An RNA of 177 nucleotides, treated with DMS and 2A3 and read out base by base. High 2A3 reactivity points to a flexible backbone, as in loops and unpaired stretches. For 2A3 the reverse transcriptase was SuperScript II with manganese. For 2A3, 10,916 sequencing reads were counted. The data come from the RNA Mapping Database (RMDB), library OK1LIB. For DMS the reverse transcriptase was MarathonRT.
[RMDB]
RNA sequence: GGGAACGACUCGAGUAGAGUCGAAAAAGCAGGACGACAUCGUCGCGCACUUCUUCGUGUGCUCCACCCACGAUUUGAUCCUGUUCUUCACCACCCAGGGACGGGUUUAUCGGGCCAAGGCCUACGAUAUACCGUCUUGGUUCGCCAAGACGGUAUAAAAAGAAACAACAACAACAAC
Reactivity to DMS in 0.01 (KOAc 150mM, MgCl2 10mM, bicine 150mM(pH8.5), 24C), signal-to-noise 5, nucleotides 027 to 126: a050g000c020a000g020g000a030c030g010a130c190a030u000c000g020u010c150g000c030g010c040a000c010u020u060c200u060u020c180g020u010g020u010g010c000u010c100c070a090c120c090c130a100c010g000a010u000u000u020g010a200u000c000c000u010g010u020u000c030u020u000c060a090c030c030a090c040c030c040a220g010g010g000a050c060g010g010g000u010u020u020a040u020c070g000g010g010c010c030a120a140g010g010c000c010u020a030c150g010a130
Reactivity to 2A3 in 0.01 (KOAc 150mM, MgCl2 10mM, bicine 150mM(pH8.5), 24C), signal-to-noise 9, nucleotides 027 to 126: a000g010c010a010g000g010a000c020g010a030c030a110u030c010g070u060c050g000c010g030c010a010c020u190u220c040u210u210c150g020u000g010u010g020c010u070c060c050a140c030c020c000a020c000g010a010u020u020u130g150a230u030c010c000u000g000u040u020c020u050u030c010a160c050c010a050c010c010c010a040g100g020g040a040c060g020g000g000u010u110u040a070u070c020g010g000g000c010c030a070a070g110g030c010c040u070a070c080g020a010